[RMDB]
RNA sequence: GGGAACGACUCGAGUAGAGUCGAAAAGAUAUGGAACUGUAUGGCUUAACCGUUGAUCUCGGAAACGAGGGAGGUUAAGAACUACCAUUAAGCAGUUCCUAAGUCAAAAGGUCACUUCGGUGACCAACCCAUGGCUUAUGUUCGCAUAAGCCAUGGGAAAAGAAACAACAACAACAAC
Reactivity to 2A3 in 0.01 (KOAc 150mM, MgCl2 10mM, bicine 150mM(pH8.5), 24C), signal-to-noise 1, nucleotides 027 to 126: g020a000u120a020u130g000g000a010a040c000u020g040u140a010u040g080g000c000u000u000a000a000c000c030g200u270u030g010a010u020c000u010c000g050g060a090a050a050c020g000a020g000g000g000a020g000g000u000u010a000a000g000a000a000c030u100a030c020c000a030u040u100a230a090g000c000a010g000u000u000c000c000u020a130a020g050u000c030a020a060a030a120g000g020u000c000a000c000u070u160c300g120g000u000g000a020c030c000a000a030
Reactivity to DMS in 0.01 (KOAc 150mM, MgCl2 10mM, bicine 150mM(pH8.5), 24C), signal-to-noise 1, nucleotides 027 to 126: g010a030u000a300u000g000g000a010a000c000u000g000u000a040u010g000g030c010u000u000a000a010c000c000g010u030u020g000a000u010c000u000c010g020g000a220a080a120c020g010a000g040g020g000a030g000g010u000u000a000a010g000a020a060c080u000a300c070c030a020u010u030a070a140g010c010a020g000u000u010c000c000u020a020a080g000u010c040a090a100a130a090g000g040u000c000a010c000u010u010c180g000g020u000g000a040c000c000a060a050